An RNA of 177 nucleotides, treated with 2A3 and DMS and read out base by base.
It was measured as part of the RMDB library RFMREP.
For 2A3 the reverse transcriptase was SuperScript II with manganese.
Reactivities are given for positions 27 through 126.

[RMDB]
RNA sequence: GGGAACGACUCGAGUAGAGUCGAAAACCACGCAAGGCAGAUAGGGGAGAUAGUGCUUCUCUUAUGAGAAGGGCGUCGUGAACACAGUUAAGUGGCUCGUCUGUAGCUCCCGGAGGUGAGUACACCUACACUUAGGAGAGUUCGCUCUCCUAAGUGUAAAAGAAACAACAACAACAAC
Reactivity to 2A3 in 0.01 (KOAc 150mM, MgCl2 10mM, bicine 150mM(pH8.5), 24C), signal-to-noise 2, nucleotides 027 to 126: c000c000a010c020g080c020a060a120g110g020c020a010g020a110u170a090g040g020g030g000a070g010a060u090a110g050u060g040c000u030u000c000u000c000u180u270a250u300g030a010g000a000a040g020g020g010c030g010u040c030g040u020g060a070a010c040a000c010a080g060u160u160a210a010g030u030g050g050c000u000c020g050u000c010u000g060u030a020g020c000u010c030c000c000g020g050a010g020g000u020g010a070g010u030a050c000a010c000c020u000
Reactivity to DMS in 0.01 (KOAc 150mM, MgCl2 10mM, bicine 150mM(pH8.5), 24C), signal-to-noise 2, nucleotides 027 to 126: c010c000a080c210g020c070a090a050g010g010c030a040g020a090u000a060g000g000g010g010a100g000a050u010a070g020u000g010c020u000u000c010u000c010u010u010a130u020g010a020g020a050a020g000g000g030c040g020u000c060g020u020g000a080a110c030a090c040a140g010u000u010a020a120g020u010g020g000c020u000c040g000u000c030u010g030u000a080g000c030u000c010c020c010g020g000a040g000g010u000g000a180g000u000a060c030a020c040c050u020